[RMDB]
RNA sequence: GGGAACGACUCGAGUAGAGUCGAAAAGACGGUCCUGAGAACUCUUAUCUUCCUGCUUAGAAGAGGAGUCUCCUGGACGCUUCCGCCCGCUCGGGAUGGGCCUCAGUGCCGACGAGGAGUCCGCAGGUCUGUCAUUAUGUUUCGACAUAAUGACAGAAAAAGAAACAACAACAACAAC
Reactivity to DMS in 0.01 (KOAc 150mM, MgCl2 10mM, bicine 150mM(pH8.5), 24C), signal-to-noise 4, nucleotides 027 to 126: g000a080c090g020g020u000c000c000u020g000a120g010a040a080c000u000c000u000u000a200u010c000u000u000c010c110u000g020c300u010u000a120g000a030a000g010a010g000g000a020g010u000c030u000c030c100u000g010g000a020c010g000c040u000u000c070c050g010c030c000c030g030c050u000c050g000g000g000a070u010g010g010g010c010c030u010c110a120g020u010g000c030c040g020a070c050g000a060g010g000a200g000u000c030c090g000c050a090g000g010
Reactivity to 2A3 in 0.01 (KOAc 150mM, MgCl2 10mM, bicine 150mM(pH8.5), 24C), signal-to-noise 3, nucleotides 027 to 126: g030a020c090g050g110u000c000c000u050g010a050g020a160a070c010u010c030u090u160a080u110c000u030u010c020c050u140g160c090u200u210a030g000a020a000g010a020g020g000a010g010u000c020u000c000c050u020g010g010a000c000g010c000u040u010c020c010g030c020c000c000g020c030u030c030g010g000g090a090u040g050g040g040c020c000u050c050a090g050u090g110c010c010g020a060c020g030a020g070g030a030g020u000c000c040g030c040a020g000g110